[RMDB]
RNA sequence: GGGAACGACUCGAGUAGAGUCGAAAACUGGGGCUUCCGAACCUAUUCACAAGAACCCACGAGUUCUUCUCGAAGGCAUUUAUAUACUACAAAAAUCGAAGUGAUCUUAUCGGAACAGACGGGACCAGAUUUACGAUCGAUUCGUCGAUCGUAAAUCAAAAGAAACAACAACAACAAC
Reactivity to DMS in 0.01 (KOAc 150mM, MgCl2 10mM, bicine 150mM(pH8.5), 24C), signal-to-noise 1, nucleotides 027 to 126: c140u000g000g010g020g000c140u020u000c020c000g030a050a130c170c080u000a100u000u010c030a060c060a060a180g000a060a060c060c010c040a140c140g000a140g010u000u000c100u000u010c050u000c050g020a060a040g000g010c060a080u010u000u030a120u000a060u010a080c190u000a140c040a030a080a000a070a030u010c060g000a080a100g000u000g020a050u000c120u040u000a060u000c000g020g000a060a090c140a080g000a100c130g020g020g030a120c060c040a030
Reactivity to 2A3 in 0.01 (KOAc 150mM, MgCl2 10mM, bicine 150mM(pH8.5), 24C), signal-to-noise 1, nucleotides 027 to 126: c010u010g000g000g030g100c030u040u000c030c000g040a050a050c000c020u090a110u050u100c010a020c020a150a010g010a020a000c000c100c080a090c100g100a140g060u030u090c000u010u000c020u050c040g040a080a030g050g000c010a010u030u110u000a130u030a030u000a060c070u040a040c060a000a160a020a060a090u050c060g040a100a020g040u030g020a020u000c010u050u150a140u110c050g020g000a020a000c010a050g120a050c030g050g030g000a010c010c020a040

The record gives the reactivity of an RNA of 177 nucleotides to DMS and 2A3. Reactivities are rounded to 0.1 and cut off at 0 and 3. The reactions ran in a buffer of 150 mM KOAc, 10 mM MgCl2 and 150 mM bicine (pH 8.5), at 24 C. For 2A3 the reverse transcriptase was SuperScript II with manganese. DMS adducts were read by reverse transcription with MarathonRT. Source: RMDB library OK2TST, as collected in RNAgym.